RNA sequence: GGGAACGACUCGAGUAGAGUCGAAAAGAUAUGGAUAUAGCAACAGCUCCGUGUCGGAAACGACACAGGAGACAUGCUAGUCCUAAGUCAAAAGGUCCUACUCUCCCUUCGGGGAGAGUAGGACCAACAAUUCGAGAUGGUUCGCCAUCUCGAAUUGAAAAGAAACAACAACAACAAC
Reactivity to DMS in 0.01 (KOAc 150mM, MgCl2 10mM, bicine 150mM(pH8.5), 24C), signal-to-noise 1, nucleotides 027 to 126: g010a030u000a280u000g000g020a000u000a070u010a010g000c000a020a140c250a190g000c010u000c000c000g040u000g000u000c000g000g000a040a120a120c000g020a010c010a020c000a070g080g000a000g020a100c080a100u000g000c010u000a020g010u020c000c000u010a040a080g000u010c020a080a050a120a070g020g020u000c000c000u010a010c000u000c000u030c020c000c000u000u000c140g010g000g010g000a000g020a000g000u000a000g000g010a000c010c000a010a040